[RMDB]
RNA sequence: GGGAACGACUCGAGUAGAGUCGAAAAGUUGAAGUGUUCGCACUUCAACAAACGCUCAACUCAUGGAGCGCAAGACGAAUAGCUACUUAUUCGACAUGAGAAAAAGACUGUAGUUCGCUACAGUCAACUAAGAAACACUCUUCGGAGUGUUUCUUAGAAAAGAAACAACAACAACAAC
Reactivity to DMS in 0.01 (KOAc 150mM, MgCl2 10mM, bicine 150mM(pH8.5), 24C), signal-to-noise 3, nucleotides 027 to 126: g010u010u000g000a020a020g010u000g020u000u010c240g000c000a000c010u000u010c010a000a000c000a060a110a170c000g030c000u000c000a070a110c000u000c000a000u000g000g000a010g010c000g020c140a050a070g000a040c030g000a010a000u000a000g010c290u010a110c140u000u000a010u010u000c010g000a110c010a010u000g000a000g020a060a080a110a140a110g000a030c000u010g010u000a010g000u000u020c250g020c000u000a000c000a000g000u000c000a010a070
Reactivity to 2A3 in 0.01 (KOAc 150mM, MgCl2 10mM, bicine 150mM(pH8.5), 24C), signal-to-noise 3, nucleotides 027 to 126: g000u000u000g000a000a000g010u000g010u070u130c160g070c070a000c000u000u000c000a000a000c010a010a010a000c020g000c000u010c010a030a100c020u010c010a010u010g010g000a010g000c020g030c130a090a040g100a030c030g010a000a010u010a020g050c120u220a110c080u280u040a030u010u010c000g010a010c000a010u000g010a000g050a060a030a010a010a010g000a000c000u000g000u010a000g030u040u060c240g020c100u000a000c000a010g000u000c000a010a000